[RMDB]
RNA sequence: GGGAACGACUCGAGUAGAGUCGAAAAGAUAUGGACGUUCUGUAGUCCAGCGAUGAAACAAUUUCGGAAACGAAAUUGUGGAGCUGCUACAGAGACGUCCUAAGUCAAAGUCGACUUCGGUCGACAAGGAUAUCACCUAGUUCGCUAGGUGAUAUCCAAAAGAAACAACAACAACAAC
Reactivity to DMS in 0.01 (KOAc 150mM, MgCl2 10mM, bicine 150mM(pH8.5), 24C), signal-to-noise 4, nucleotides 027 to 126: g000a080u010a300u000g010g000a010c010g010u000u010c000u010g000u000a010g000u000c270c050a010g100c010g010a080u010g000a160a120a010c000a000a010u000u000u000c010g010g000a140a080a240c000g010a010a010a010u000u010g020u000g000g000a040g020c010u000g000c000u000a000c000a000g010a060g020a010c000g010u000c000c000u000a000a090g010u000c050a130a140a210g010u000c000g000a020c000u010u020c220g020g020u010c000g020a000c020a040a070
Reactivity to 2A3 in 0.01 (KOAc 150mM, MgCl2 10mM, bicine 150mM(pH8.5), 24C), signal-to-noise 2, nucleotides 027 to 126: g040a010u090a070u230g010g010a000c000g000u010u000c020u020g030u020a020g060u120c270c000a000g000c010g300a300u050g010a020a000a000c010a000a010u010u000u020c010g020g000a050a060a060c000g000a010a010a000u000u000g010u020g000g010a010g000c000u020g000c000u010a000c010a000g060a070g070a030c000g000u010c000c000u000a050a020g000u000c060a110a050a080g010u000c000g010a000c000u050u120c300g130g010u000c000g000a000c010a000a050